[RMDB]
RNA sequence: GGGAACGACUCGAGUAGAGUCGAAAAAACAAGAUAUGGACGUGAGACUAGCAAACACUAAGACAGAUAAGUCGGAAACGACUUAUUCGAGUGUUUGAACUACUAGCUCACGUCCUAAGUCAAAGAAUCAUUAACUACACUUCGGUGUAGUUAAUGAAAAAGAAACAACAACAACAAC
Reactivity to DMS in 0.01 (KOAc 150mM, MgCl2 10mM, bicine 150mM(pH8.5), 24C), signal-to-noise 7, nucleotides 027 to 126: a100a040c140a140a120g010a010u000a010u010g000g010a020c000g010u000g000a010g010a190c010u000a000g000c000a010a010a000c010a010c010u030a180a140g010a070c300a070g000a000u000a000a010g010u000c010g020g000a010a000a010c000g020a010c000u000u000a000u000u000c010g000a010g020u000g000u000u000u000g000a040a020c010u010a300c020u010a000g000c010u000c000a000c000g010u000c000c000u000a000a010g000u000c000a120a090a090g000a090a090
Reactivity to 2A3 in 0.01 (KOAc 150mM, MgCl2 10mM, bicine 150mM(pH8.5), 24C), signal-to-noise 2, nucleotides 027 to 126: a000a000c130a060a000g000a010u010a010u030g000g010a010c000g000u010g000a010g200a300c010u000a000g050c000a010a000a010c010a000c020u280a300a010g000a010c000a000g030a020u000a010a000g010u000c000g000g000a010a000a000c000g000a000c000u000u000a000u030u020c000g010a000g000u020g000u000u000u000g010a000a010c060u220a040c000u000a190g000c000u000c000a000c000g000u000c000c000u000a010a000g000u000c010a080a000a110g160a060a110